[RMDB]
RNA sequence: GGGAACGACUCGAGUAGAGUCGAAAAAGUGGCGCCUGCCAAAGUACCCGAUCUAAGUCGGGGCGCUCAGCUGUUCCAGGCGCAGUGCGCAAGUUGCCAUGGCGCGCAGGGGCGUGGUGAUGGGCCGCUGGCUGCGACGCUCGAUCCGAAGCCAACCCUACACUUGACUAUUCGUAGUCAAGUGUAGAAAAGAAACAACAACAACAAC
Reactivity to 2A3 in 0.01 (KOAc 150mM, MgCl2 10mM, bicine 150mM(pH8.5), 24C), signal-to-noise 3, nucleotides 027 to 156: a000g030u040g030g000c090g110c030c020u050g000c030c010a160a080a020g080u110a130c000c000c000g000a020u030c100u300a160a060g130u010c000g010g000g010g020c020g010c010u040c020a090g040c040u080g050u140u060c020c030a040g090g000c000g000c040a000g000u110g070c120g000c110a080a100g170u210u300g050c030c030a080u050g080g000c020g000c000g000c040a010g030g000g000g000c020g020u030g010g020u070g040a240u170g010g030g020c000c000g010c030u020g030g010c040u040g010c020g030a020c010g010c030u000c010g040a040u000c040c020g050a090a020g040c020c000a030a070c020c010
Reactivity to DMS in 0.01 (KOAc 150mM, MgCl2 10mM, bicine 150mM(pH8.5), 24C), signal-to-noise 1, nucleotides 027 to 156: a100g000u020g000g020c000g020c020c020u000g100c020c020a070a090a100g020u010a120c000c010c000g000a060u000c150u010a120a240g010u000c020g020g000g000g030c050g020c020u010c060a130g040c020u010g050u010u000c030c010a180g000g030c000g020c030a120g040u000g000c070g010c020a200a100g030u000u000g040c010c030a080u000g020g020c010g000c030g000c070a150g020g020g020g000c030g020u010g020g050u000g000a140u000g030g020g050c010c020g000c040u000g010g010c030u010g010c040g020a150c020g050c040u000c050g010a060u000c000c020g000a150a140g010c020c000a060a050c070c050